An RNA of 177 nucleotides, treated with 2A3 and DMS and read out base by base.

RNA sequence: GGGAACGACUCGAGUAGAGUCGAAAAGAUAUGGAUCCACCGUAGACAUGAAGGCAAUCGGAAACGAUUGCACUUCAACAGCUACGUGGAUCCUAAGUCAAAAGUGGAUCCCCUUCGGGGGAUCCACGAGUAGUGUUAGCUUCGGCUAACACUACUCAAAAGAAACAACAACAACAAC
Reactivity to 2A3 in 0.01 (KOAc 150mM, MgCl2 10mM, bicine 150mM(pH8.5), 24C), signal-to-noise 2, nucleotides 027 to 126: g000a000u020a020u070g000g000a000u000c000c000a020c090c200g000u000a000g020a070c150a300u190g020a000a000g020g000c000a010a000u000c020g000g020a010a020a000c000g020a010u000u010g000c010a080c010u010u000c010a040a070c130a080g000c000u010a000c000g010u000g010g010a000u000c010c000u000a010a000g000u010c000a000a000a120a250g020u000g000g000a020u000c000c000c000c030u040u170c260g130g000g010g020g000a000u000c020c000a000c000
Reactivity to DMS in 0.01 (KOAc 150mM, MgCl2 10mM, bicine 150mM(pH8.5), 24C), signal-to-noise 3, nucleotides 027 to 126: g010a000u000a080u010g000g000a010u000c000c000a020c300c180g020u010a010g020a060c140a120u010g010a070a000g010g000c000a010a000u000c000g030g000a010a010a020c000g020a020u000u000g010c000a050c010u010u000c000a070a050c170a200g010c000u010a000c010g010u000g000g000a010u000c000c000u000a000a060g000u000c020a110a060a100a170g030u000g000g000a010u000c000c000c010c010u000u010c220g020g010g060g020g000a000u000c000c000a000c000
The RNA was probed in 150 mM KOAc, 10 mM MgCl2 and 150 mM bicine (pH 8.5) at 24 C. Source: RMDB library TTRDES, as collected in RNAgym.